[RMDB]
RNA sequence: GGGAACGACUCGAGUAGAGUCGAAAACGCCAUUUAGCUCGAAAGUAAACCACUCGCCAUCUUCUUUUUCUUCAAACGCUUUUUCACCGAGAACUAGACCAGUGAUUGCGCAAAUAUCAAAUAGUUCUACGUGGAAACAUUUCGAUGUUUCCACGUAAAAAGAAACAACAACAACAAC
Reactivity to DMS in 0.01 (KOAc 150mM, MgCl2 10mM, bicine 150mM(pH8.5), 24C), signal-to-noise 1, nucleotides 027 to 126: c190g020c030c020a120u000u000u010a080g000c020u000c010g000a110a080a130g000u000a060a110a160c060c010a030c030u010c110g000c020c030a040u000c030u000u000c010u030u010u000u000u000c020u010u030c050a070a120a120c060g020c030u010u010u010u010u010c060a030c100c020g010a040g000a050a020c040u000a060g010a140c090c020a060g000u010g020a050u000u000g020c090g000c090a080a060a100u010a090u020c020a050a050a080u000a090g010u000u000c010
Reactivity to 2A3 in 0.01 (KOAc 150mM, MgCl2 10mM, bicine 150mM(pH8.5), 24C), signal-to-noise 1, nucleotides 027 to 126: c040g030c010c010a030u000u020u120a050g000c050u030c070g040a140a020a070g030u150a040a140a180c000c000a020c000u010c060g000c010c020a040u000c120u120u120c030u000u090u000u070u020c030u070u040c020a080a070a080c060g000c060u050u050u080u130u040c020a040c000c000g070a040g020a120a020c040u060a020g070a040c000c050a040g000u020g050a150u030u070g000c100g000c020a070a040a040u130a070u050c000a070a080a040u100a070g000u020u000c000